[RMDB]
RNA sequence: GGGAACGACUCGAGUAGAGUCGAAAAGUUUAGCUGAACAGCCAACAUCAGCAAAGUGCCUGCAAUUUAGGAGUGGAAUCAUUUUAGGACUUACCUUAUGGCCUAACAAACAUGGCAGGGUAAUAGGGUUGGGAAUCAUCUUCGGAUGAUUCCCAACAAAAGAAACAACAACAACAAC
Reactivity to 2A3 in 0.01 (KOAc 150mM, MgCl2 10mM, bicine 150mM(pH8.5), 24C), signal-to-noise 1, nucleotides 027 to 126: g020u070u040u170a010g000c000u000g030a080a050c040a030g090c010c010a000a010c010a080u000c020a000g000c020a090a000a000g160u160g030c020c030u010g070c040a050a090u030u100u170a080g000g120a050g030u110g020g050a050a070u130c040a090u000u080u130u110a050g040g050a010c010u060u080a050c000c030u070u090a110u150g090g000c030c000u010a030a080c040a160a130a000c010a120u020g070g010c010a000g000g030g070u020a030a050u090a130g130g000
Reactivity to DMS in 0.01 (KOAc 150mM, MgCl2 10mM, bicine 150mM(pH8.5), 24C), signal-to-noise 1, nucleotides 027 to 126: g000u010u000u000a080g010c000u000g000a130a100c100a210g020c030c020a020a090c050a210u000c020a060g000c030a070a070a180g020u010g020c020c000u000g010c070a090a140u020u010u010a100g010g010a080g010u000g030g000a060a070u010c140a050u000u010u010u000a060g010g000a060c080u000u010a110c030c010u000u000a080u000g020g000c000c000u000a080a080c240a060a060a150c170a130u010g000g020c040a040g010g010g010u000a100a040u010a020g020g000